[RMDB]
This 177-nucleotide RNA was probed chemically with 2A3 and DMS. DMS adducts were read by reverse transcription with MarathonRT. 2A3 adducts were read by reverse transcription with SuperScript II with manganese. The DMS profile rests on 9,272 reads. The data come from the RNA Mapping Database (RMDB), library OK1LIB. High 2A3 reactivity points to a flexible backbone, as in loops and unpaired stretches.

RNA sequence: GGGAACGACUCGAGUAGAGUCGAAAAGUUGGAUGACACAGUGAGUACUAGGGCGACUGAUGGUGUGAGCUGGUUGAUAUGAUACUUACUAGGUGGGUUGAAGGCAACAGCGAUGACGGUAAGCAGCAGUACAGCGUUAUUUCGAUAACGCUGUACUAAAAGAAACAACAACAACAAC
Reactivity to 2A3 in 0.01 (KOAc 150mM, MgCl2 10mM, bicine 150mM(pH8.5), 24C), signal-to-noise 3, nucleotides 027 to 126: g090u060u070g090g010a170u040g010a020c010a000c030a130g040u020g040a010g030u060a020c070u030a040g010g080g000c020g060a040c020u030g020a060u060g050g020u020g010u020g040a030g020c030u050g050g020u090u010g020a030u030a100u140g030a010u010a060c010u040u020a040c020u020a040g110g000u030g060g020g000u010u060g040a050a010g070g000c000a030a020c000a080g020c030g030a030u120g040a020c010g000g000u000a080a000g000c040a010g000c000
Reactivity to DMS in 0.01 (KOAc 150mM, MgCl2 10mM, bicine 150mM(pH8.5), 24C), signal-to-noise 4, nucleotides 027 to 126: g020u010u000g000g000a040u020g000a090c060a080c030a090g030u020g000a110g000u000a060c060u000a090g020g010g040c070g010a050c070u010g000a060u030g000g000u010g000u030g000a090g030c040u010g020g000u010u000g010a070u020a070u000g020a100u010a030c070u020u000a060c060u030a080g020g010u000g010g000g010u000u000g010a100a110g010g000c050a040a040c110a070g000c040g010a050u010g010a070c050g000g010u020a060a100g000c140a060g000c160